[RMDB]
RNA sequence: GGGAACGACUCGAGUAGAGUCGAAAAGGAGGCUUUUCACGGCCUGGACGUGAAAUUCCACACACAGGCUUUUUCCGCUCACGGCAGCGGGAGAGAAGUCAUUGAUGCCAUGUGCCAUGCCAACCUAGCUAUCCAUGAUCUUCGGAUCAUGGAUAGCAAAAGAAACAACAACAACAAC
Reactivity to 2A3 in 0.01 (KOAc 150mM, MgCl2 10mM, bicine 150mM(pH8.5), 24C), signal-to-noise 3, nucleotides 027 to 126: g120g000a040g020g020c030u020u010u010u030c080a050c030g020g010c000c030u010g020g080a030c030g030u000g030a040a090a090u170u080c050c010a030c000a000c000a000c000a020g000g000c000u040u020u000u020u000c000c000g000c000u020c020a180c120g200g000c140a000g000c000g000g020g010a020g010a000g000a020a010g010u020c030a050u020u130g060a040u130g030c020c030a030u110g030u040g040c030c010a030u060g020c000c020a030a040c050c010u040a010
Reactivity to DMS in 0.01 (KOAc 150mM, MgCl2 10mM, bicine 150mM(pH8.5), 24C), signal-to-noise 1, nucleotides 027 to 126: g050g000a140g000g000c070u010u000u000u000c000a170c170g010g000c010c010u010g010g000a070c220g060u000g030a020a170a060u030u000c150c030a180c010a020c080a200c000a110g010g010c000u000u020u030u000u000c010c010g000c000u000c030a140c180g030g010c080a010g000c000g000g000g040a000g000a020g010a030a010g000u000c050a060u050u000g000a050u090g020c050c030a000u000g000u060g000c070c010a090u060g010c090c050a030a040c060c000u000a120
The record gives the reactivity of an RNA of 177 nucleotides to 2A3 and DMS. The reactions ran in a buffer of 150 mM KOAc, 10 mM MgCl2 and 150 mM bicine (pH 8.5), at 24 C. High DMS reactivity at an A or C suggests that its Watson-Crick edge is free. The 2A3 profile rests on 3,126 reads.